[RMDB]
RNA sequence: GGGAACGACUCGAGUAGAGUCGAAAAGAAAAGCGCUGCUUGAUACUCUGCGCUUGAAUCUGUAAUUCCGAAGGGAGUGGCAACAUAUCAGAUUCCUUGUAUCCCCUUCGCAUAUUUCGUAGGUGAAUCGUGGAUUUACUUUCGAGUAAAUCCACGAAAAAGAAACAACAACAACAAC
Reactivity to DMS in 0.01 (KOAc 150mM, MgCl2 10mM, bicine 150mM(pH8.5), 24C), signal-to-noise 2, nucleotides 027 to 126: g010a110a060a100a040g010c000g010c030u000g000c120u000u020g010a030u000a040c080u000c020u010g010c000g010c030u010u000g010a060a030u010c030u000g000u010a050a090u010u020c020c010g010a150a100g000g000g000a060g030u000g000g010c140a080a070c140a080u000a110u000c040a040g000a070u000u000c000c050u000u000g010u000a040u000c030c000c000c070u000u000c000g010c240a100u000a090u000u020u000c020g010u010a020g010g010u000g010a060a080
Reactivity to 2A3 in 0.01 (KOAc 150mM, MgCl2 10mM, bicine 150mM(pH8.5), 24C), signal-to-noise 1, nucleotides 027 to 126: g020a000a060a000a010g000c000g020c010u010g010c020u050u080g010a020u030a070c050u030c000u030g000c020g020c000u000u000g010a010a030u020c010u000g030u030a060a060u050u030c010c010g000a030a010g090g000g010a120g000u100g090g020c020a010a050c020a160u160a060u180c010a010g010a120u010u000c000c000u050u070g020u050a060u040c040c000c010c050u030u040c040g000c050a060u120a160u300u140u060c030g040u040a000g000g090u090g100a040a090
An RNA of 177 nucleotides, treated with DMS and 2A3 and read out base by base. The data come from the RNA Mapping Database (RMDB), library OK2TST. The DMS profile rests on 1,630 reads. Conditions: 150 mM KOAc, 10 mM MgCl2 and 150 mM bicine (pH 8.5), 24 C. The 2A3 profile rests on 853 reads.